[RMDB]
RNA sequence: GGGAACGACUCGAGUAGAGUCGAAAAUACAGAAGAGGAGCAGUACAAGGUUACAAAGGCAGAGCUUGCAGAAACAGAGUACGUGUUUGACGUGGACAAGAAGCGUUGCGUUAAGAAGGAAGAAGCCACGAUUCGAAUAGUUCGCUAUUCGAAUCGUAAAAGAAACAACAACAACAAC
Reactivity to DMS in 0.01 (KOAc 150mM, MgCl2 10mM, bicine 150mM(pH8.5), 24C), signal-to-noise 3, nucleotides 027 to 126: u000a090c120a120g010a090a050g010a080g010g010a080g020c080a060g000u000a050c140a030a100g000g010u000u000a060c130a060a120a110g010g000c020a060g010a070g010c060u010u000g010c070a060g000a100a050a060c110a060g010a090g030u000a050c050g000u000g010u000u000u000g010a040c100g000u000g020g020a060c110a030a070g000a060a120g010c110g050u000u000g000c060g020u000u010a060a080g020a050a050g000g010a080a060g020a070a070g020c100c130
Reactivity to 2A3 in 0.01 (KOAc 150mM, MgCl2 10mM, bicine 150mM(pH8.5), 24C), signal-to-noise 1, nucleotides 027 to 126: u080a000c050a020g090a050a000g000a130g030g030a000g000c020a000g000u020a040c020a030a050g080g000u070u030a050c040a030a090a000g030g000c050a030g000a010g020c050u040u100g000c020a000g050a060a030a010c060a000g020a000g110u050a020c030g030u020g040u090u070u070g040a000c000g040u040g130g000a010c030a040a130g100a150a000g090c040g050u060u060g010c010g050u030u040a090a020g020a040a050g070g010a030a010g030a020a020g010c000c000

Structure probing data (DMS and 2A3) for a 177-nucleotide construct. The data come from the RNA Mapping Database (RMDB), library OK2TRN. The reactions ran in a buffer of 150 mM KOAc, 10 mM MgCl2 and 150 mM bicine (pH 8.5), at 24 C.